[RMDB]
The record gives the reactivity of an RNA of 177 nucleotides to 2A3 and DMS.
RNA sequence: GGGAACGACUCGAGUAGAGUCGAAAAGGCCCCUGGAUGGCUGAGUCAGUUGGCCUCUUCUGACCUCCUCUCAGGGUCAUGAUCUCUGGGUCCUGGAGCUUAGCCCCUGGUGAGGCUCCCUGCUCAGACAGCGAAAGAAAUUCGUUUCUUUCGCUGUAAAAGAAACAACAACAACAAC
Reactivity to 2A3 in 0.01 (KOAc 150mM, MgCl2 10mM, bicine 150mM(pH8.5), 24C), signal-to-noise 4, nucleotides 027 to 126: g050g010c030c000c000c000u020g020g030a100u130g100g000c140u030g030a030g080u040c010a010g000u060u090g120g070c040c030u130c000u070u010c010u010g020a020c000c000u020c010c000u040c020u030c030a020g010g010g000u010c010a060u150g100a090u020c030u000c020u060g020g010g030u160c030c050u030g000g010a010g010c010u060u100a010g010c010c000c010c090u150g010g010u050g020a070g040g000c000u010c000c000c000u010g000c000u000c010a010g010
Reactivity to DMS in 0.01 (KOAc 150mM, MgCl2 10mM, bicine 150mM(pH8.5), 24C), signal-to-noise 4, nucleotides 027 to 126: g000g010c110c000c050c010u010g000g000a040u020g010g010c220u010g000a150g000u010c020a010g000u010u000g020g000c120c120u030c070u000u000c010u000g000a020c020c000u000c030c040u000c050u030c060a070g000g000g010u000c020a030u020g010a130u000c020u000c030u000g000g000g000u020c090c040u000g000g000a040g010c010u000u000a300g000c010c010c180c120u010g010g020u010g000a100g010g000c010u000c010c010c060u000g000c010u000c030a060g000
DMS (dimethyl sulfate) methylates the pairing face of unpaired adenines and cytosines. It was measured as part of the RMDB libraries RFM100 and RFMREP. Reactivities are given for positions 27 through 126.